[RMDB]
RNA sequence: GGGAACGACUCGAGUAGAGUCGAAAAGCAAACAACGUACAUUCUAUAAUACCUGAAGUACGAAAAGGUAAAUAUAUAAAGCUUCAGCUAAAAGGUCUGCUAGAUGCAUAUAUAAAAAGACCAAAAACGAUAACCUAUGUUUCGACAUAGGUUAUCGAAAAGAAACAACAACAACAAC
Reactivity to DMS in 0.01 (KOAc 150mM, MgCl2 10mM, bicine 150mM(pH8.5), 24C), signal-to-noise 2, nucleotides 027 to 126: g010c070a090a120a080c070a090a110c030g010u010a000c010a160u000u010c070u020a070u030a230a160u000a100c150c080u020g000a010a010g030u000a030c030g000a060a050a090a110g000g000u000a040a110a100u010a020u000a020u000a040a090a090g000c000u000u010c000a020g010c000u010a050a060a100a090g000g020u000c120u000g000c040u000a090g010a020u000g020c050a110u000a020u020a030u010a110a020a030a090a060g000a070c030c010a100a020a080a030a110
Reactivity to 2A3 in 0.01 (KOAc 150mM, MgCl2 10mM, bicine 150mM(pH8.5), 24C), signal-to-noise 2, nucleotides 027 to 126: g050c030a080a050a080c000a060a000c070g000u000a020c050a230u000u070c030u130a200u040a300a210u110a200c010c060u030g010a060a000g020u040a020c030g040a050a110a050a000g060g020u020a010a120a050u220a030u020a010u000a090a210a000g020c000u020u030c010a000g030c030u110a160a080a010a110g100g040u030c070u050g030c000u050a080g010a020u100g050c010a030u040a000u000a000u020a070a120a010a010a000g010a000c010c020a000a070a000a070a000

The record gives the reactivity of an RNA of 177 nucleotides to DMS and 2A3. The data come from the RNA Mapping Database (RMDB), library M2PK90.